Notes: The record gives the reactivity of an RNA of 207 nucleotides to 2A3. 2A3 adducts were read by reverse transcription with SuperScript II with manganese. The RNA was probed in 150 mM KOAc, 10 mM MgCl2 and 150 mM bicine (pH 8.5) at 24 C.
RNA sequence: GGGAACGACUCGAGUAGAGUCGAAAAUACUUGGGUUUCGACCCAAGUAAAAAAAGAUAUGGACUCCUUGUAGGGAGAACGUGGUCGGAAACGACCACCGGUUCAUCGAUCUAUGGGAGUCCUAAGUCAAAAAGUCUGGUGUUUCGACACCAGACAAGUAGAGGAUGUAGUUCGCUACAUCCUCUACAAAAGAAACAACAACAACAAC
Reactivity to 2A3 in 0.01 (KOAc 150mM, MgCl2 10mM, bicine 150mM(pH8.5), 24C), signal-to-noise 1, nucleotides 027 to 156: u060a040c000u010u000g000g000g030u030u050u120c250g050a030c000c000c010a000a010g000u010a000a000a000a000a000a000a000g000a010u030a010u040g000g010a000c000u010c010c060u110u210g130u100a010g030g000g110a210g000a040a000c020g000u000g000g000u000c000g000g000a000a000a000c000g000a000c010c000a010c000c010g100g040u030u000c040a110u300c170g090a030u020c020u000a030u030g020g010g030a000g010u000c000c010u000a000a000g010u010c000a000a000a100a090a130g010u000c000u000g060g000u000g080u010u120u090c190g100a050c000a000c020c020a000g000a000c010a010a000